Background
Conditions: 150 mM KOAc, 10 mM MgCl2 and 150 mM bicine (pH 8.5), 24 C. Structure probing data (2A3) for a 207-nucleotide construct. 2A3 adducts were read by reverse transcription with SuperScript II with manganese.

RNA sequence: GGGAACGACUCGAGUAGAGUCGAAAAGAAAUUUCGUUUCCUUUACACUUCUCAAACCGGGAUCAAGAGAAGCAAAGCAUCCCUCAUAUCCACGAUGGAGGGUGUCGUGGAGUAUACUGUACCAAAAAGAGCGAACACGGCUUCGGCCGUGUUCGAAUCACAGCUAUUGGUUCGCCAAUAGCUGUGAAAAAGAAACAACAACAACAAC
Reactivity to 2A3 in 0.01 (KOAc 150mM, MgCl2 10mM, bicine 150mM(pH8.5), 24C), signal-to-noise 2, nucleotides 027 to 156: g020a000a040a030u150u240u130c100g040u030u030u050c020c000u010u030u070a050c040a010c000u010u020c010u020c000a090a150a110c010c030g000g070g000a070u040c030a230a060g030a010g010a060a000g090c070a070a000a000g000c010a030u010c080c000c000u080c040a060u110a040u110c020c020a040c040g010a000u030g070g040a040g060g050g000u030g000u000c000g000u000g020g000a030g020u000a010u010a020c160u080g130u170a090c020c070a000a060a060a010a060g100a040g080c010g000a000a000c000a000c000g020g000c020u040u050c190g060g000c000c000g020u010g030u010u010c000g010a000a000